[RMDB]
RNA sequence: GGGAACGACUCGAGUAGAGUCGAAAAGACAAUAGCGUAGGGAACCAAGCAAAGAGGUAAGAAAUCCCACGGUAGAAGGCUUGGUUCUAGCCGUGGGAAGAACAAGUCCCACUCCCUACGCCGAUAAGUCUCAUAUAGGAUUCGUCCUAUAUGAGACAAAAGAAACAACAACAACAAC
Reactivity to 2A3 in 0.01 (KOAc 150mM, MgCl2 10mM, bicine 150mM(pH8.5), 24C), signal-to-noise 6, nucleotides 027 to 126: g080a020c050a050a180u060a130g000c000g000u010a000g010g000g000a020a030c010c010a020a000g010c020a040a150a090g180a150g060g030u150a140a080g060a140a090a020u010c000c000c000a000c010g000g020u060a090g040a140a000g050g010c020u030u030g020g000u050u030c030u040a010g010c000c000g000u000g010g010g000a000a010g020a020a020c040a040a000g060u030c000c010c000a000c000u010c000c000c000u000a000c010g000c000c000g010a020u040a150a040
Reactivity to DMS in 0.01 (KOAc 150mM, MgCl2 10mM, bicine 150mM(pH8.5), 24C), signal-to-noise 7, nucleotides 027 to 126: g010a100c150a100a100u010a070g000c010g020u010a010g000g000g010a040a120c010c010a020a060g010c050a120a090a140g000a100g000g000u000a080a080g010a080a110a090u010c000c000c000a010c020g010g010u000a040g000a030a020g000g010c020u000u000g010g000u000u000c220u010a030g010c020c010g030u000g000g010g010a020a020g000a070a090c210a070a080g000u010c020c010c010a300c060u000c000c000c000u000a010c010g010c000c080g000a070u000a060a090